[RMDB]
RNA sequence: GGGAACGACUCGAGUAGAGUCGAAAACGUCACAUAUGGAACCUUCUGGUGGUCAGGACAACUCAUCUUUAAAGGAAAACUACGCACUCCAAGACAAUGGAAUACCUACAACCUACCAAGCCUAGACUCGAAAUGGAACUUUCGAGUUCCAUUUCGAAAAAGAAACAACAACAACAAC
Reactivity to 2A3 in 0.01 (KOAc 150mM, MgCl2 10mM, bicine 150mM(pH8.5), 24C), signal-to-noise 2, nucleotides 027 to 126: c020g060u050c030a010c010a150u200a080u100g040g050a040a090c020c000u080u070c030u090g050g000u010g000g020u040c060a030g040g000a010c020a080a050c040u040c080a160u030c040u060u270u200a130a120a040g110g000a050a080a000a010c090u100a030c040g000c030a040c020u090c020c010a030a030g090a090c060a060a020u030g050g020a060a010u080a110c000c010u040a060c050a070a070c000c010u100a020c010c040a080a000g000c000c010u000a010g040a060c040
Reactivity to DMS in 0.01 (KOAc 150mM, MgCl2 10mM, bicine 150mM(pH8.5), 24C), signal-to-noise 2, nucleotides 027 to 126: c080g020u000c030a060c090a070u000a080u000g000g010a090a130c050c030u000u000c020u000g000g020u010g000g000u010c090a090g030g000a060c090a070a110c100u000c070a080u000c060u000u000u020a070a090a230g000g010a080a020a130a130c080u010a010c150g000c030a070c060u010c030c030a070a090g000a070c150a050a060u000g010g000a100a130u000a040c020c020u000a030c130a010a050c070c020u000a060c040c050a070a100g010c060c010u000a080g020a110c110
The record gives the reactivity of an RNA of 177 nucleotides to 2A3 and DMS. The 2A3 profile rests on 1,117 reads. For 2A3 the reverse transcriptase was SuperScript II with manganese.